[RMDB]
RNA sequence: GGGAACGACUCGAGUAGAGUCGAAAAGCGAGCAAGGGCUGACGACGCAAGCGCAAUGGCGCGCGGUGAUCGACCGGAUCGCCGAUCACCGCGAUCCGUUCGCGGCAUUGCUCGCGCGCGUCGAUCAGGCUACUAUGACGUUCGCGUCAUAGUAGCCAAAAGAAACAACAACAACAAC
Reactivity to DMS in 0.01 (KOAc 150mM, MgCl2 10mM, bicine 150mM(pH8.5), 24C), signal-to-noise 5, nucleotides 027 to 126: g000c020g000a030g000c020a060a030g000g030g020c030u000g010a100c030g010a020c030g030c100a090a210g010c020g010c070a090a040u000g010g000c080g020c000g010c000g000g000u000g000a020u000c000g010a040c050c120g020g010a060u000c090g010c020c010g010a010u000c010a020c010c010g020c010g000a000u000c040c010g020u000u000c020g020c010g000g000c020a070u000u000g000c020u010c030g010c020g010c190g020c060g000u000c020g010a130u010c070a150
Reactivity to 2A3 in 0.01 (KOAc 150mM, MgCl2 10mM, bicine 150mM(pH8.5), 24C), signal-to-noise 4, nucleotides 027 to 126: g030c020g010a000g020c030a030a030g140g280g000c030u060g040a140c040g000a010c010g020c090a090a070g020c030g010c070a060a240u140g170g000c030g000c010g010c000g020g010u010g000a020u010c010g030a030c030c010g070g050a090u050c020g000c040c000g010a010u010c000a010c000c000g000c010g000a010u020c010c000g040u080u070c040g000c000g020g000c010a030u020u020g000c000u030c020g000c000g000c030g000c020g050u130c010g010a110u040c050a030